Chemical mapping of a 177-nucleotide RNA with DMS and 2A3. The reactions ran in a buffer of 150 mM KOAc, 10 mM MgCl2 and 150 mM bicine (pH 8.5), at 24 C. For DMS the reverse transcriptase was MarathonRT.
RNA sequence: GGGAACGACUCGAGUAGAGUCGAAAAUGGCCGCGCAGUCUACAUGAUGGCCUGAUGGCGCGGCCGUCUGAUCCAGCGCGACAGGCCGGCGCGGAUCGGCCCGGUACGAUCUGACGGCCGUACUCUCCAUUCUGGUGAAUUUCGAUUCACCAGAAUGAAAAGAAACAACAACAACAAC
Reactivity to DMS in 0.01 (KOAc 150mM, MgCl2 10mM, bicine 150mM(pH8.5), 24C), signal-to-noise 9, nucleotides 027 to 126: u000g000g020c000c000g010c030g010c020a120g010u000c040u010a110c120a100u010g010a130u010g020g020c050c070u000g010a060u010g010g010c010g020c010g000g000c000c010g010u000c010u000g000a050u000c010c040a140g030c050g010c040g010a110c090a120g010g010c030c020g010g010c010g020c030g010g000a020u000c010g000g000c010c010c020g010g000u010a050c150g000a050u010c060u000g020a160c120g010g010c010c010g000u000a040c080u000c050u010c070
Reactivity to 2A3 in 0.01 (KOAc 150mM, MgCl2 10mM, bicine 150mM(pH8.5), 24C), signal-to-noise 5, nucleotides 027 to 126: u030g010g000c010c010g000c030g000c020a020g030u040c060u120a080c050a190u260g060a120u160g210g050c030c030u050g040a060u070g050g040c000g000c000g020g000c000c000g000u000c000u010g020a030u010c010c030a160g050c040g010c030g080a090c040a100g040g020c020c030g030g000c060g000c040g010g010a060u010c000g000g000c000c010c010g020g040u120a080c090g030a110u060c060u120g090a030c030g000g000c000c000g000u030a060c040u030c000u000c030